Conditions: 150 mM KOAc, 10 mM MgCl2 and 150 mM bicine (pH 8.5), 24 C. Chemical mapping of a 207-nucleotide RNA with 2A3.
RNA sequence: GGGAACGACUCGAGUAGAGUCGAAAAGGGGUCGACUCUUGGAUUUAGGGAAGAAGUCUCCUUGGAUUUAAUACUGAAGCCUCCACGGUAUUUGUCAGGAGUCACGCCAUUUGUCAGAGUCGACGGAGGCACCCAAAGGACUACUUCGGUAGUCCAACAUCUUAGAGUGCUUCGGCACUCUAAGAUGAAAAGAAACAACAACAACAAC
Reactivity to 2A3 in 0.01 (KOAc 150mM, MgCl2 10mM, bicine 150mM(pH8.5), 24C), signal-to-noise 2, nucleotides 027 to 156: g060g010g010g020u030c030g000a000c010u030c040u100u230g090g040a110u200u280u300a250g010g010g010a050a120g050a150a070g120u040c000u030c000c010u060u130g000g010a050u170u300u300a020a010u030a010c000u000g040a080a040g030c000c000u000c030c010a000c000g000g020u010a030u030u020u070g080u040c040a050g000g000a020g030u030c030a020c090g120c030c020a160u230u090u130g040u070c080a000g000a010g010u000c000g000a020c010g000g010a000g000g000c010a000c000c000c020a050a100a070g010g000a000c000u000a000c000u020u080c220g110g000u000a000g000u000c000c000a000a000